[RMDB]
RNA sequence: GGGAACGACUCGAGUAGAGUCGAAAACAAACAACAUGCCAAGCAGUAGGGAAGAAGAGAAAGUGACGGUACCUGCAGAAGAAGCGCCGGCUAACAACGUAACAGGAGACGCAGCAAGGCAUGAAAACCCAUUAUCGGUCUUCGGACCGAUAAUGGGAAAAGAAACAACAACAACAAC
Reactivity to 2A3 in 0.01 (KOAc 150mM, MgCl2 10mM, bicine 150mM(pH8.5), 24C), signal-to-noise 2, nucleotides 027 to 126: c000a010a220a020c030a000a020c000a040u090g020c010c000a010a020g050c000a090g010u130a050g070g000g000a070a020g040a070a030g060a000g130a120a100a000g070u050g100a050c010g000g000u040a140c000c010u090g030c030a020g100a160a000g030a040a000g060c060g000c010c000g000g000c000u080a030a100c020a010a110c140g000u040a090a020c000a040g010g080a020g020a010c030g000c010a000g000c000a000a000g000g000c000a000u000g000a030a040a000a000
Reactivity to DMS in 0.01 (KOAc 150mM, MgCl2 10mM, bicine 150mM(pH8.5), 24C), signal-to-noise 1, nucleotides 027 to 126: c070a030a010a070c280a050a050c050a100u000g050c040c000a000a300g000c110a230g000u000a110g000g000g050a050a090g000a000a220g000a060g000a100a050a290g000u000g080a140c000g000g000u000a000c020c000u000g010c000a140g000a090a110g090a080a110g000c060g000c150c040g000g000c000u110a000a000c090a220a110c040g020u000a000a050c060a100g000g010a300g020a050c060g000c010a050g000c020a000a300g000g140c020a060u000g000a000a110a050a280